[RMDB]
RNA sequence: GGGAACGACUCGAGUAGAGUCGAAAAACUCCUUUCGAGGAGUACCAGAGGGGUCCAGCCCGCUAUGACAUGCUCCCAGGCUGAAGCCUCCACGGCCUGAGCGAGCAACAGCAUAGCGGCUGGACGGAGGCACCCCCACGAAGGCUUUCGAGCCUAACGUACGCAGUUGAUUCGUCAACUGCGUACGAAAAGAAACAACAACAACAAC
Reactivity to 2A3 in 0.01 (KOAc 150mM, MgCl2 10mM, bicine 150mM(pH8.5), 24C), signal-to-noise 1, nucleotides 027 to 156: a000c030u030c000c000u050u050u090c240g250a040g000g000a000g000u000a020c000c030a040g110a110g120g050g010g050u010c000c000a000g020c000c030c040g000c000u000a000u020g060a170c170a300u300g020c010u000c000c000c000a020g020g000c000u080g040a090a000g030c000c010u000c050c000a000c000g000g030c000c000u040g050a070g110c120g010a000g060c030a100a040c050a050g180c000a000u000a000g000c030g010g010c000u000g000g000a000c000g000g000a000g000g030c000a030c010c040c010c000c000a050c110g160a040a010g030g010c000u180u160u290c300g040a010g010c000c030u000a070a020